RNA sequence: GGGAACGACUCGAGUAGAGUCGAAAAGAUAUGGAUACCCAGGAGACAUGCUGCGGAUAAUUAUUAUUACGUCGGAAACGACGUAAUAAUAAUUAUCCGUCAGCAACAGCUCCGGUAUCCUAAGUCACUAGUAACAUUUCUUCGGAAAUGUUACUAGAAAAGAAACAACAACAACAAC
Reactivity to DMS in 0.01 (KOAc 150mM, MgCl2 10mM, bicine 150mM(pH8.5), 24C), signal-to-noise 3, nucleotides 027 to 126: g010a060u000a300u010g010g010a010u000a000c030c050c300a250g050g000a030g020a050c080a180u000g000c000u000g010c000g020g000a010u000a010a000u000u000a000u000u000a010u000u000a010c000g000u000c000g000g010a120a100a260c000g020a020c000g010u000a000a000u000a000a000u000a000a000u000u000a000u000c010c010g020u000c010a000g000c000a010a040c300a150g010c000u000c010c000g020g000u010a000u010c000c000u000a010a050g000u010c060a250
An RNA of 177 nucleotides, treated with DMS and read out base by base. The RNA was probed in 150 mM KOAc, 10 mM MgCl2 and 150 mM bicine (pH 8.5) at 24 C. It was measured as part of the RMDB library TTRINS. Values cover nucleotides 27 to 126.